The record gives the reactivity of an RNA of 177 nucleotides to DMS and 2A3. Source: RMDB library RFM100, as collected in RNAgym. DMS adducts were read by reverse transcription with MarathonRT. The RNA was probed in 150 mM KOAc, 10 mM MgCl2 and 150 mM bicine (pH 8.5) at 24 C. 2A3 adducts were read by reverse transcription with SuperScript II with manganese.
RNA sequence: GGGAACGACUCGAGUAGAGUCGAAAACAAGGAGCGCGAUAAAGUAGAAGGGUGAAGUCUAUACUGUGUGCAGUAGGGCUCGCUUGGCUAUAAAUUUCAAGUCUCCUUGUUUAAGGAGACUUUUCUUUUCCCUUAAAGUCUUCGGACUUUAAGGGAAAAAAGAAACAACAACAACAAC
Reactivity to DMS in 0.01 (KOAc 150mM, MgCl2 10mM, bicine 150mM(pH8.5), 24C), signal-to-noise 1, nucleotides 027 to 126: c020a090a000g000g000a030g000c030g000c290g010a050u000a020a030a150g000u020a000g000a040a020g010g020g000u000g050a110a050g030u010c020u030a050u000a050c000u000g040u070g000u090g020c020a050g000u000a030g000g000g000c000u000c000g000c000u000u000g020g020c030u020a040u000a040a090a170u000u000u000c060a070a300g010u010c000u000c000c030u000u000g020u000u010u020a000a070g020g000a050g040a110c080u040u030u000u020c000u010u050
Reactivity to 2A3 in 0.01 (KOAc 150mM, MgCl2 10mM, bicine 150mM(pH8.5), 24C), signal-to-noise 2, nucleotides 027 to 126: c030a000a000g040g000a000g020c000g010c050g040a030u020a140a120a050g040u030a000g040a100a000g030g010g010u040g040a090a000g020u000c000u040a300u000a080c010u000g020u040g200u220g300c000a000g000u000a000g000g010g000c000u010c000g000c010u040u010g050g020c010u000a010u040a110a080a140u130u130u050c080a070a000g040u040c000u000c000c000u000u000g000u000u000u010a000a000g020g010a080g010a060c000u030u030u020u010c000u000u020